[RMDB]
RNA sequence: GGGAACGACUCGAGUAGAGUCGAAAAUCUGUACAAUGCUGAGAAUGGAGUGUUGAAGUCCUGAACUAUUAUUGUAUUGGAGUCUGUCUCUCUCUUUAGAUCUAAUAAUAUUUGCUUUCUAUAUCUGUGUGCUCUAGUAUUGGAUGCAUAUAUAUCAACUCAGUAAUUACUUCGGUAAUUACUGAGUAAAAGAAACAACAACAACAAC
Reactivity to DMS in 0.01 (KOAc 150mM, MgCl2 10mM, bicine 150mM(pH8.5), 24C), signal-to-noise 3, nucleotides 027 to 156: u000c050u010g030u000a060c030a100a090u000g010c040u000g000a090g030a150a080u000g020g020a110g010u010g000u000u000g010a100a170g010u010c030c060u000g000a100a080c060u010a060u000u000a030u010u000g010u000a080u000u000g010g000a100g030u010c040u020g000u000c040u000c010u020c020u000c040u000u010u010a090g000a080u000c030u000a060a110u010a060a120u010a120u000u000u000g010c020u000u010u000c040u010a090u000a070u010c040u010g030u000g000u000g000c020u000c020u000a090g000u000a080u000u010g000g010a080u000g010c010a030u000a060u000a080u000a110u010c060a110
Reactivity to 2A3 in 0.01 (KOAc 150mM, MgCl2 10mM, bicine 150mM(pH8.5), 24C), signal-to-noise 6, nucleotides 027 to 156: u010c010u020g010u020a020c030a040a110u070g050c030u070g060a020g040a140a070u090g020g010a050g030u120g030u080u120g070a120a020g030u010c020c020u070g050a070a030c040u040a040u240u020a080u070u130g040u020a050u030u120g030g000a020g040u010c040u030g060u020c010u020c000u000c000u000c000u110u100u080a070g020a090u050c030u090a070a050u110a200a040u020a240u080u080u030g020c010u050u050u030c040u050a070u010a120u170c040u030g070u010g030u040g090c030u010c030u050a060g010u040a130u050u100g030g010a010u090g010c020a000u070a020u040a010u050a010u190c020a000
The record gives the reactivity of an RNA of 207 nucleotides to DMS and 2A3. The reactions ran in a buffer of 150 mM KOAc, 10 mM MgCl2 and 150 mM bicine (pH 8.5), at 24 C. For 2A3, 3,908 sequencing reads were counted. For DMS the reverse transcriptase was MarathonRT. The DMS profile rests on 7,587 reads.